RNA sequence: GGGAACGACUCGAGUAGAGUCGAAAACACGCACUCUUCCUUGUCUUUCUUUGGGAGUGUUUGCAGCGGGGCAGUGCUGCGAGCUUGAUGGGGACCACGACGGCGUCACCCCUCGAGAAUGUCCCAAAAAAUUUAGUACUUUCGAGUACUAAAUUUUAAAAGAAACAACAACAACAAC
Reactivity to DMS in 0.01 (KOAc 150mM, MgCl2 10mM, bicine 150mM(pH8.5), 24C), signal-to-noise 6, nucleotides 027 to 126: c180a120c140g010c070a040c020u000c020u000u000c030c030u000u000g020u000c090u000u000u010c020u000u000u000g010g000g010a060g010u000g010u000u000u000g010c010a030g010c030g020g000g010g020c130a100g010u010g010c010u000g000c000g010a040g010c030u000u000g010a050u000g010g000g000g000a090c070c060a100c170g010a100c200g010g010c110g010u010c040a120c010c010c010c010u000c010g010a020g010a100a140u000g000u000c000c000c010a000a010
Reactivity to 2A3 in 0.01 (KOAc 150mM, MgCl2 10mM, bicine 150mM(pH8.5), 24C), signal-to-noise 3, nucleotides 027 to 126: c070a010c040g030c000a020c000u030c010u080u090c010c020u070u050g080u070c070u040u170u010c010u010u070u060g040g000g000a050g020u050g050u050u060u150g020c030a010g010c030g080g050g120g030c070a050g110u050g150c010u020g000c000g020a020g010c000u030u020g000a030u080g010g000g000g000a010c030c000a060c110g300a040c090g110g110c040g030u010c040a290c030c000c000c000u000c000g010a010g010a050a060u090g040u060c010c000c000a040a110